This 177-nucleotide RNA was probed chemically with DMS and 2A3. Conditions: 150 mM KOAc, 10 mM MgCl2 and 150 mM bicine (pH 8.5), 24 C. As a SHAPE reagent, 2A3 marks flexible, mostly unpaired nucleotides at the ribose 2'-OH.

RNA sequence: GGGAACGACUCGAGUAGAGUCGAAAAAAAGAUAUGGACGUCGGCAAGCUGGCUGACCCUAAGACAGUAGGUCGGAAACGACCUAUCGAGGGUCAGUCCAGUGAUGACCCGACGUCCUAAGUCAAAAUCACAUAAUGUCGUUCGCGACAUUAUGUGAAAAAGAAACAACAACAACAAC
Reactivity to DMS in 0.01 (KOAc 150mM, MgCl2 10mM, bicine 150mM(pH8.5), 24C), signal-to-noise 3, nucleotides 027 to 126: a060a110a070g010a060u000a300u020g000g000a020c000g010u010c020g010g000c020a080a130g000c000u000g000g010c000u000g000a030c000c000c000u010a190a050g030a080c300a120g040u000a000g010g050u000c020g010g000a080a080a170c010g010a020c000c000u010a010u000c050g020a030g010g000g010u000c000a000g000u020c000c000a000g020u030g030a060u010g010a140c300c000c010g000a000c000g020u000c010c000u000a030a020g000u000c030a070a040a010a170
Reactivity to 2A3 in 0.01 (KOAc 150mM, MgCl2 10mM, bicine 150mM(pH8.5), 24C), signal-to-noise 1, nucleotides 027 to 126: a000a010a020g090a060u110a070u110g010g000a000c000g000u000c000g000g040c060a030a130g010c000u000g000g010c000u000g000a000c000c000c000u090a170a050g070a020c030a040g130u070a010g000g000u000c010g040g000a010a090a080c010g000a010c020c010u000a020u050c010g020a010g000g000g010u000c000a010g010u040c000c000a000g000u000g020a100u070g040a020c000c000c000g020a000c000g010u030c000c000u010a010a000g010u010c010a000a010a020a270
For DMS the reverse transcriptase was MarathonRT.
The data come from the RNA Mapping Database (RMDB), library TTRDES.